This 207-nucleotide RNA was probed chemically with 2A3 and DMS. High 2A3 reactivity points to a flexible backbone, as in loops and unpaired stretches. Conditions: 150 mM KOAc, 10 mM MgCl2 and 150 mM bicine (pH 8.5), 24 C. Source: RMDB library OK3TST, as collected in RNAgym.
[RMDB]
RNA sequence: GGGAACGACUCGAGUAGAGUCGAAAAAGGAGAGGAUGAUCGAUGUGAUGGCACACACCGACUACGCGGACAGUAACGUUUUGCAAAAUUAUUUCAUCAAGAGCAACUUUGUCAAUUUCGAUUACAUCAUCAUUGUGCUGUGGCGCACCAUAUCCAACCCAGAGGAGGAAUUCGUUCCUCCUCUGGGAAAAGAAACAACAACAACAAC
Reactivity to 2A3 in 0.01 (KOAc 150mM, MgCl2 10mM, bicine 150mM(pH8.5), 24C), signal-to-noise 4, nucleotides 027 to 156: a000g070g020a030g000a010g050g010a030u060g010a030u060c040g010a040u020g010u020g050a110u050g030g020c020a010c000a000c000a000c050c020g110a070c020u080a020c050g010c040g010g020a010c010a040g050u050a070a020c060g020u040u000u010u100g010c020a040a040a070a050u120u110a130u040u180u110c080a170u060c060a100a050g000a010g030c020a020a040c050u090u070u050g040u100c010a030a140u030u080u150c030g050a070u040u060a060c020a070u060c020a000u030c000a020u050u160g040u000g030c030u010g020u070g090g000c020g010c000a010c000c000a020u070a080u140c030c030a020a060
Reactivity to DMS in 0.01 (KOAc 150mM, MgCl2 10mM, bicine 150mM(pH8.5), 24C), signal-to-noise 1, nucleotides 027 to 156: a050g040g000a100g020a120g020g000a090u010g020a120u000c040g000a030u010g040u000g010a090u010g020g010c110a240c020a010c080a030c020c000g010a050c010u020a150c070g000c000g010g010a210c070a080g030u000a050a040c010g000u040u000u010u000g000c030a050a030a070a000u000u010a070u000u000u010c000a100u030c240a080a150g000a070g020c100a030a070c060u010u000u000g050u000c080a070a090u000u000u020c010g030a150u000u000a020c050a120u010c070a100u010c050a100u000u000g020u000g010c000u000g040u000g030g010c020g000c060a050c050c030a060u010a120u000c000c000a070a210